Structure probing data (DMS) for a 177-nucleotide construct. For DMS, 631 sequencing reads were counted. The data come from the RNA Mapping Database (RMDB), library 15KREP. Conditions: 150 mM KOAc, 10 mM MgCl2 and 150 mM bicine (pH 8.5), 24 C.
RNA sequence: GGGAACGACUCGAGUAGAGUCGAAAAGGGCUAGCCGUCAGGUGUUCCACCCCCCGAGAGGGUACGAGUGAGGCUUAUCCCGGGGAACUCGGCGAAUCGUCCCCACAUAGCAGUUCCCAGGACCCCCCUUUGGAACUAACUUCGGUUAGUUCCAAAGAAAAGAAACAACAACAACAAC
Reactivity to DMS in 0.01 (KOAc 150mM, MgCl2 10mM, bicine 150mM(pH8.5), 24C), signal-to-noise 1, nucleotides 027 to 126: g050g020g030c040u000a200g010c040c010g000u030c100a090g010g010u000g040u000u010c040c030a090c020c000c000c030c020c050g010a050g010a120g020g010g010u000a040c060g000a140g030u020g010a140g020g010c040u000u000a140u000c010c000c020g070g000g000g000a090a090c030u000c040g020g020c010g000a060a050u000c040g000u000c020c030c000c070a120c170a040u000a080g030c120a140g000u000u000c010c000c000a150g010g020a300c020c000c000c020c010

Reactivities are given for positions 27 through 126.